[RMDB]
RNA sequence: GGGAACGACUCGAGUAGAGUCGAAAAAGUAUGCUGCAGGAACAUGCUUGAUUCUUCAGUUAAAUUGUAGGGGCUUUAGGUACUAUAGCUUAGGGAACUCUAAGCAUGUGAGGAUAUGCCUUGCUUCUUUAGGAAAAGCCAAGCAUGGGUGUAAUACGUAACCUGUACUUUUCGAAGUACAGGUUACAAAAGAAACAACAACAACAAC
Reactivity to 2A3 in 0.01 (KOAc 150mM, MgCl2 10mM, bicine 150mM(pH8.5), 24C), signal-to-noise 3, nucleotides 027 to 156: a000g170u170a110u150g040c100u090g040c000a020g080g040a020a020c010a020u000g020c000u040u010g050a080u150u030c050u070u060c010a090g090u140u140a140a220a130u220u140g110u130a040g060g000g000g000c050u080u080u180a020g000g020u010a020c010u030a030u060a030g000c000u000u010a030g000g010g160a080a070c030u020c000u130a030a030g000c000a030u110g030u010g100a100g080g010a040u060a020u220g050c000c000u010u020g020c000u000u070c020u090u060u130a150g000g020a070a000a000a000g000c010c010a000a010g000c000a020u030g030g030g020u030g030u050a040a050u080a050c060
Reactivity to DMS in 0.01 (KOAc 150mM, MgCl2 10mM, bicine 150mM(pH8.5), 24C), signal-to-noise 1, nucleotides 027 to 156: a100g030u000a050u000g020c000u010g000c040a150g000g020a140a080c020a050u000g030c000u000u000g000a080u000u000c020u000u000c040a240g000u000u000a060a100a240u030u000g080u000a100g040g010g030g010c000u000u010u000a000g020g000u000a030c050u000a080u000a130g000c030u000u000a010g030g000g000a090a130c130u000c000u000a010a040g020c030a060u000g000u000g000a140g010g020a180u000a080u010g020c000c050u010u000g010c060u000u000c040u000u000u020a100g070g000a100a040a040a080g020c040c010a030a080g000c030a040u020g010g000g000u000g020u010a030a100u000a110c210